[RMDB]
RNA sequence: GGGAACGACUCGAGUAGAGUCGAAAACAAUCAGGGCUGUAAACAUGCCGCUAAUACAUGUUAAAUCACGAUUGAUACUCGAAGGUUUAAUACCCUGACUUCUUCGGGUGGCGCAGUACUGGCUGAUAAGCGAUUUCGUAAUUUGAAAUGCGCAUGGGCUCAAUCUGAUUUUCGAAUCAGAUUGAGCAAAAGAAACAACAACAACAAC
Reactivity to DMS in 0.01 (KOAc 150mM, MgCl2 10mM, bicine 150mM(pH8.5), 24C), signal-to-noise 2, nucleotides 027 to 156: c040a070a080u000c020a000g010g050g090c010u010g010u010a120a050a070c020a050u000g020c020c040g030c090u000a070a080u010a100c030a040u020g030u020u000a040a060a090u010c010a140c030g000a110u000u020g020a270u000a030c300u000c010g010a140a070g010g010u020u000u000a040a120u010a090c040c000c000u000g030a040c060u020u000c040u000u010c020g000g000g000u000g020g050c050g020c060a080g000u000a070c060u000g000g000c050u000g000a100u000a070a130g000c030g000a070u000u000u000c010g020u000a080a130u030u020u000g000a020a060a050u000g000c030g060c030a070u010g010g020
Reactivity to 2A3 in 0.01 (KOAc 150mM, MgCl2 10mM, bicine 150mM(pH8.5), 24C), signal-to-noise 4, nucleotides 027 to 156: c050a000a050u070c040a000g000g050g020c010u070g070u190a080a110a030c020a050u100g060c080c040g000c100u110a070a090u100a090c060a050u120g020u120u110a070a120a100u110c060a040c150g040a100u050u140g030a030u070a100c020u010c020g060a070a050g050g000u050u030u110a040a060u120a080c000c000c000u010g060a050c050u050u030c000u040u020c020g030g000g000u020g040g030c060g000c010a000g010u030a060c040u070g110g010c010u020g020a100u030a250a020g040c000g000a010u000u000u010c030g020u100a070a260u060u060u210g020a040a040a010u180g130c020g000c000a060u140g080g020

Notes: An RNA of 207 nucleotides, treated with DMS and 2A3 and read out base by base. The reactions ran in a buffer of 150 mM KOAc, 10 mM MgCl2 and 150 mM bicine (pH 8.5), at 24 C. It was measured as part of the RMDB library OK3TST.